The record gives the reactivity of an RNA of 177 nucleotides to 2A3 and DMS.
The RNA was probed in 150 mM KOAc, 10 mM MgCl2 and 150 mM bicine (pH 8.5) at 24 C.
It was measured as part of the RMDB libraries RFM100 and RFMREP.

[RMDB]
RNA sequence: GGGAACGACUCGAGUAGAGUCGAAAAGGUGGGUUUAUCCUACUAUAAUUGGAAUGAGAUAACUGUAAAUAUGUUGUUGAUAUUCAAUUGGAGGGCAAGUCUGGUGCCAGCAGCCGCGGUAAUUCCAAGAAUCCCAAUUAUUCGUAAUUGGGAUUCUAAAAGAAACAACAACAACAAC
Reactivity to 2A3 in 0.01 (KOAc 150mM, MgCl2 10mM, bicine 150mM(pH8.5), 24C), signal-to-noise 6, nucleotides 027 to 126: g060g020u040g020g060g030u050u160u110a140u180c030c010u010a050c020u050a050u120a140a090u060u060g040g030a060a070u110g020a060g010a090u090a090a050c040u060g110u240a050a110a080u190a130u100g000u010u000g000u010u010g020a060u040a140u120u050c020a030a070u020u030g060g040a060g010g020g000c030a040a030g030u020c020u040g050g040u040g040c020c000a010g010c010a000g010c020c000g020c000g020g010u060a080a070u070u010c010c000a000
Reactivity to DMS in 0.01 (KOAc 150mM, MgCl2 10mM, bicine 150mM(pH8.5), 24C), signal-to-noise 4, nucleotides 027 to 126: g000g020u000g010g000g000u000u010u020a090u020c010c010u000a080c050u020a060u030a050a040u000u010g000g000a030a130u010g000a230g000a030u000a030a040c050u010g010u030a060a110a110u030a080u030g010u000u000g000u000u000g010a110u020a070u000u010c020a030a080u000u010g000g000a060g000g000g000c060a030a050g000u000c040u000g000g000u020g010c040c030a050g030c040a080g000c030c050g000c040g010g010u020a040a070u000u010c050c040a090